[RMDB]
RNA sequence: GGGAACGACUCGAGUAGAGUCGAAAAAAAAAGAGCGUACAUCUCUCUCAGACUGUACGACAGUCUGACUCUCUCGUACGCUUGUUCAACGAGAGAGAGAGAGCGUUGCAACAAGUGUGAAAAAAAACGUUAUAGUAGUCUUCGGACUACUAUAACGAAAAGAAACAACAACAACAAC
Reactivity to 2A3 in 0.01 (KOAc 150mM, MgCl2 10mM, bicine 150mM(pH8.5), 24C), signal-to-noise 3, nucleotides 027 to 126: a000a000a000a000a000g070a020g000c060g020u070a060c070a180u040c020u010c000u000c000u020c010a000g000a020c000u010g010u150a120c070g080a060c100a000g010u000c000u010g010a050c000u000c000u010c000u010c030g000u040a050c040g010c070u030u070g040u060u070c020a020a010c010g010a010g000a010g000a000g000a000g000a000g010a110g040c010g020u030u050g090c050a050a020c010a040a070g050u050g020u080g150a160a050a010a000a000a000a000a020
Reactivity to DMS in 0.01 (KOAc 150mM, MgCl2 10mM, bicine 150mM(pH8.5), 24C), signal-to-noise 3, nucleotides 027 to 126: a040a050a050a060a050g000a050g020c040g010u000a040c050a130u000c000u000c020u010c090u010c010a030g000a020c010u000g010u000a120c250g020a150c030a030g010u000c000u000g000a240c080u000c010u010c010u010c050g000u000a090c050g000c070u000u010g020u010u000c080a060a040c060g010a060g000a050g000a060g010a050g000a010g010a000g000c140g040u000u000g000c070a050a070c110a070a040g020u020g000u000g010a000a010a000a060a020a040a110a110
The record gives the reactivity of an RNA of 177 nucleotides to 2A3 and DMS. For DMS, 2,507 sequencing reads were counted. The data come from the RNA Mapping Database (RMDB), library M2PK90. The 2A3 profile rests on 3,675 reads. In probing experiments dimethyl sulfate is read out at A N1 and C N3, which are open when not base-paired. DMS adducts were read by reverse transcription with MarathonRT. Conditions: 150 mM KOAc, 10 mM MgCl2 and 150 mM bicine (pH 8.5), 24 C.